[RMDB]
RNA sequence: GGGAACGACUCGAGUAGAGUCGAAAACGAGUCUUCGGACUCGAAACCGCGUACUACCUACCGCAUACGCUUUUGACGCUUUGCGUCCCAAAUAGGACGUUAAGCGAUAAGCGUAUGAACUACGGUAGGUAUCGCAACACAUGAUGUUCGCAUCAAAACAAUGUGCACUAUUCGUAGUGCACAUUGUAAAAGAAACAACAACAACAAC
Reactivity to 2A3 in 0.01 (KOAc 150mM, MgCl2 10mM, bicine 150mM(pH8.5), 24C), signal-to-noise 5, nucleotides 027 to 156: c010g000a000g010u000c010u050u110c250g120g020a000c000u000c000g000a020a020a000c030c030g010c030g020u050a120c040u010a000c020c010u000a010c030c000g010c010a010u010a010c000g000c000u070u050u040u090g260a110c020g000c000u000u000u080g000c000g000u020c000c010c000a280a300a240u300a120g000g000a000c000g000u020u030a000a000g000c010g030a030u010a020a000g000c010g000u000a000u000g000a010a030c090u120a040c040g000g000u010a010g000g010u000a030u070c000g020c000a040a130c060a020c030a210u130g000a030u030g070u140u090c210g090c130a030u100c150a010a190a010
Reactivity to DMS in 0.01 (KOAc 150mM, MgCl2 10mM, bicine 150mM(pH8.5), 24C), signal-to-noise 2, nucleotides 027 to 156: c000g020a010g010u000c000u000u000c300g100g060a010c010u000c000g000a020a040a100c010c060g070c020g030u000a120c090u000a040c000c000u000a010c040c000g030c010a070u000a010c010g040c010u010u000u030u010g030a240c030g010c000u000u010u010g020c000g040u000c010c000c010a020a160a270u010a010g010g010a030c000g040u000u010a000a030g020c020g000a060u000a000a010g000c000g000u000a030u000g010a120a200c010u010a140c000g000g030u010a000g020g000u000a010u010c000g000c000a170a070c100a130c110a160u000g040a110u000g000u010u020c170g080c000a100u000c010a060a150a210
The record gives the reactivity of an RNA of 207 nucleotides to 2A3 and DMS. 2A3 adducts were read by reverse transcription with SuperScript II with manganese. The 2A3 profile rests on 3,983 reads. Values cover nucleotides 27 to 156.